RNA sequence: GGGAACGACUCGAGUAGAGUCGAAAAAUUAAGCACUUCAUCUUCGCCUUUACAAACCAUGACAGGAUCUACUACAAAAUAUUGUGCAUUAGAUGCCUCAUAUACUUCUCCAGCACGUUUGAUUAUCUCGAACCACGAGGUUCGCCUCGUGGUUCGAAAAAGAAACAACAACAACAAC
Reactivity to 2A3 in 0.01 (KOAc 150mM, MgCl2 10mM, bicine 150mM(pH8.5), 24C), signal-to-noise 1, nucleotides 027 to 126: a000u120u160a010a000g070c000a000c000u080u150c000a070u000c010u000u000c000g010c000c000u120u040u130a070c160a130a200a050c000c070a120u140g080a030c000a080g000g020a000u000c030u000a030c000u000a000c050a000a030a000a000u210a120u080u300g110u000g090c020a000u000u000a010g010a030u080g080c000c000u040c000a090u010a000u000a160c060u190u010c150u000c010c010a000g060c060a000c000g000u010u000u070g100a140u000u150a050u090c060
Chemical mapping of a 177-nucleotide RNA with 2A3. For 2A3, 311 sequencing reads were counted.